The data come from the RNA Mapping Database (RMDB), library TTRDEL. An RNA of 177 nucleotides, treated with DMS and 2A3 and read out base by base. The reactions ran in a buffer of 150 mM KOAc, 10 mM MgCl2 and 150 mM bicine (pH 8.5), at 24 C. In probing experiments dimethyl sulfate is read out at A N1 and C N3, which are open when not base-paired.
[RMDB]
RNA sequence: GGGAACGACUCGAGUAGAGUCGAAAAGAUAUGGAUCGUUACAACGCGAGGGAGGUCGGAAACGACCUCCUACCCACCGAACUACGUUGCGACGAUCCUAAGUCAAAGCCCUUCUUCGGAAGGGCAACAAAUUCAAUAAGUUCGCUUAUUGAAUUUGAAAAGAAACAACAACAACAAC
Reactivity to DMS in 0.01 (KOAc 150mM, MgCl2 10mM, bicine 150mM(pH8.5), 24C), signal-to-noise 8, nucleotides 027 to 126: g000a030u000a170u010g000g000a010u000c000g010u000u000a090c010a000a010c010g010c110g010a200g010g000g010a020g010g000u000c000g010g000a030a030a080c000g010a010c000c000u000c000c000u000a010c090c080c080a190c190c090g000a080a070c090u000a300c000g000u000u000g000c010g010a000c000g000a010u000c000c000u000a010a050g000u000c020a090a090a130g010c000c000c000u000u000c000u000u010c180g020g010a010a010g010g000g010c010a000a030
Reactivity to 2A3 in 0.01 (KOAc 150mM, MgCl2 10mM, bicine 150mM(pH8.5), 24C), signal-to-noise 4, nucleotides 027 to 126: g010a000u020a010u050g000g000a000u000c000g000u010u010a020c000a010a010c040g090c100g300a150g000g000g010a000g000g000u010c010g020g000a010a010a010c000g000a000c010c010u000c010c000u000a000c000c010c010a060c020c060g100a150a090c120u170a060c210g000u010u010g010c030g010a000c010g000a010u000c000c010u000a010a000g010u010c010a070a030a080g000c000c000c000u010u000c010u040u040c100g110g010a000a000g000g000g000c000a000a000